[RMDB]
RNA sequence: GGGAACGACUCGAGUAGAGUCGAAAAUUGGAUGUUAACCGUGUAGAUAAAUUCGAGCUAAGCGAUGAUCUAUCGCCAUUUAAACGGUUGGGAGAUGUGCGUGUUCGAGCAUUAGUGUCGACGCCUAACUAAGUCAGGUGUUCGCACCUGACUUAGUAAAAGAAACAACAACAACAAC
Reactivity to DMS in 0.01 (KOAc 150mM, MgCl2 10mM, bicine 150mM(pH8.5), 24C), signal-to-noise 3, nucleotides 027 to 126: u010u010g010g010a050u000g010u000u000a060a050c030c020g010u000g020u010a070g010a070u000a050a050a140u000u000c030g000a130g000c090u010a080a130g020c030g010a060u000g010a040u020c080u010a050u010c030g020c020c130a050u010u000u010a040a080a080c070g010g000u000u000g040g000g020a090g010a070u000g010u000g000c050g000u010g020u000u010c050g020a130g010c030a100u000u010a080g020u010g020u000c030g020a040c110g000c010c040u000a040
Reactivity to 2A3 in 0.01 (KOAc 150mM, MgCl2 10mM, bicine 150mM(pH8.5), 24C), signal-to-noise 2, nucleotides 027 to 126: u050u040g020g020a020u100g010u210u060a040a040c010c030g010u040g030u000a020g060a160u080a090a140a110u120u090c020g020a010g090c080u030a110a000g030c000g010a020u080g040a080u020c010u090a030u050c040g000c010c000a000u070u110u110a110a140a000c000g040g050u040u100g080g070g010a110g000a090u090g090u080g020c030g000u030g040u120u000c020g000a000g000c020a050u080u100a100g070u040g090u190c010g000a010c040g000c000c000u030a040